[RMDB]
RNA sequence: GGGAACGACUCGAGUAGAGUCGAAAAGAUCACAUUAGAAGAAAUACCUAAUGUAAAUGAUGAGUUAAUGGGUGCAGCAAACACAACAUGGCACAUGUAUACCUAUAUAACAAACCUGCACAUUGUGCAGGGGAGGACGUUUCGACGUCCUCCCCUGAAAAGAAACAACAACAACAAC
Reactivity to 2A3 in 0.01 (KOAc 150mM, MgCl2 10mM, bicine 150mM(pH8.5), 24C), signal-to-noise 3, nucleotides 027 to 126: g060a040u050c010a000c010a040u010u020a000g070a160a000g090a090a210a070u210a110c000c000u010a010a000u020g010u090a040a090a140u190g030a040u040g010a010g060u030u080a070a040u060g010g020g040u030g010c020a020g000c020a100a120a020c060a020c010a180a030c030a050u100g090g000c070a010c020a110u060g010u030a100u030a080c000c020u060a070u010a020u060a210a070c040a040a110a040c020c030u020g010c020a030c060a120u130u280g000u040g000
Reactivity to DMS in 0.01 (KOAc 150mM, MgCl2 10mM, bicine 150mM(pH8.5), 24C), signal-to-noise 4, nucleotides 027 to 126: g010a120u010c090a040c000a020u000u000a010g010a080a090g010a140a090a160u010a090c150c010u000a000a000u000g000u000a070a100a120u010g010a040u000g000a110g010u000u010a040a040u000g000g010g010u000g000c040a070g010c150a100a080a090c050a030c070a080a030c080a080u000g000g000c030a050c070a040u000g010u010a080u000a120c020c020u020a060u010a080u000a050a080c120a030a080a130c120c020u000g000c010a020c020a160u010u000g020u000g010